[RMDB]
RNA sequence: GGGAACGACUCGAGUAGAGUCGAAAAUUUGUGAGGGUGAGGCGUGUCAGUGUAUGCGGAUACAUUAAUGUGAAGGGGAGAUCAUGGUGGUGUGGUCCGCCUCUCGUUUUUGGCCAAACCUUGCGAGCUAUAUUAAAUAUUUCGAUAUUUAAUAUAGAAAAGAAACAACAACAACAAC
Reactivity to DMS in 0.01 (KOAc 150mM, MgCl2 10mM, bicine 150mM(pH8.5), 24C), signal-to-noise 4, nucleotides 027 to 126: u020u010u010g020u000g000a030g010g010g020u010g010a300g000g000c030g030u050g000u010c060a080g030u010g010u020a030u020g000c100g010g010a040u010a080c010a030u010u010a050a050u000g010u010g010a070a040g010g000g010g010a150g010a040u010c030a020u010g000g030u030g010g010u010g030u010g010g000u010c010c040g000c000c010u000c000u000c000g000u000u000u000u010u010g010g010c010c030a020a180a120c010c010u000u000g000c030g000a050g000
Reactivity to 2A3 in 0.01 (KOAc 150mM, MgCl2 10mM, bicine 150mM(pH8.5), 24C), signal-to-noise 3, nucleotides 027 to 126: u040u050u090g020u010g030a040g020g050g110u070g030a030g000g010c030g020u140g030u070c060a030g030u010g030u080a050u090g050c020g020g020a010u010a020c010a000u000u100a060a050u020g010u000g050a060a030g020g030g030g010a100g000a040u050c000a010u040g040g050u040g020g090u130g020u020g060g020u020c000c010g040c050c000u000c000u000c000g020u010u060u020u080u160g060g000c000c000a000a010a020c000c000u000u010g000c000g000a000g000